[RMDB]
This 177-nucleotide RNA was probed chemically with 2A3 and DMS. DMS adducts were read by reverse transcription with MarathonRT.
RNA sequence: GGGAACGACUCGAGUAGAGUCGAAAAAAGCAGGGUGUGAGAGAAACUCUCUCCCAGCCGGUUCGCGCAGCCAGCCUUUUCGACUCUACUCGGGUUAGCUGCGCGAACUGGCUGGCGUUCCCCAGAAUACUAACAAGUACUUCGGUACUUGUUAGUAAAAAGAAACAACAACAACAAC
Reactivity to 2A3 in 0.01 (KOAc 150mM, MgCl2 10mM, bicine 150mM(pH8.5), 24C), signal-to-noise 2, nucleotides 027 to 126: a000a010g070c060a050g010g040g020u050g020u050g040a050g020a000g060a160a250a160c030u020c010u000c020u030c050c010c000a000g000c000c000g000g000u010u000c000g000c010g000c010a010g000c030c020a010g010c020c020u120u120u040u100c040g000a010c000u000c000u040a000c000u010c000g000g000g000u000u000a000g010c000u000g000c010g000c000g010a000a000c000u000g010g000c000u000g000g000c000g000u010u000c000c000c000c000a010g070a110a030
Reactivity to DMS in 0.01 (KOAc 150mM, MgCl2 10mM, bicine 150mM(pH8.5), 24C), signal-to-noise 4, nucleotides 027 to 126: a060a040g000c060a080g010g000g020u000g010u000g000a050g010a060g000a140a110a080c140u000c030u000c040u000c070c010c000a020g000c000c010g000g000u000u000c000g000c010g000c000a020g010c000c070a070g000c020c020u000u000u000u000c030g000a030c000u000c010u000a010c010u000c010g010g000g000u000u000a020g010c000u000g010c010g020c000g000a010a010c010u000g000g020c000u000g000g000c010g000u000u000c000c000c000c110a150g010a100a120